[RMDB]
RNA sequence: GGGAACGACUCGAGUAGAGUCGAAAAUCGCACCAGUUCCGCUGUGGGUUCGCCUACAAGAACGUACGGUGUUGAGGCCCUGUCCGCCGCUGCGCUGCCACCUACUCUUCGCGCCGCUAGUCGAGCGGACUCCAGGUGGGAGCUUCCCAAUUCUCUCCGGUAGUGAAUUCUUCGGAAUUCACUACCGAAAAGAAACAACAACAACAAC
Reactivity to 2A3 in 0.01 (KOAc 150mM, MgCl2 10mM, bicine 150mM(pH8.5), 24C), signal-to-noise 2, nucleotides 027 to 156: u010c000g000c010a000c010c000a000g000u000u010c000c000g020c030u000g000u000g010g040g000u000u060c210g080c020c000u030a020c000a010a110g010a020a010c030g070u150a060c110g000g040u030g000u070u300g000a010g020g020c020c000c000u030g090u010c020c010g000c010c000g000c020u040g000c050g000c060u010g130c050c030a070c010c010u200a220c020u110c080u270u280c100g040c090g020c120c000g000c050u060a040g100u200c120g060a030g010c000g010g000a000c000u000c040c080a050g000g070u030g040g040g030a030g030c000u060u070c030c000c000a030a090u120u020c030u000c000u000c040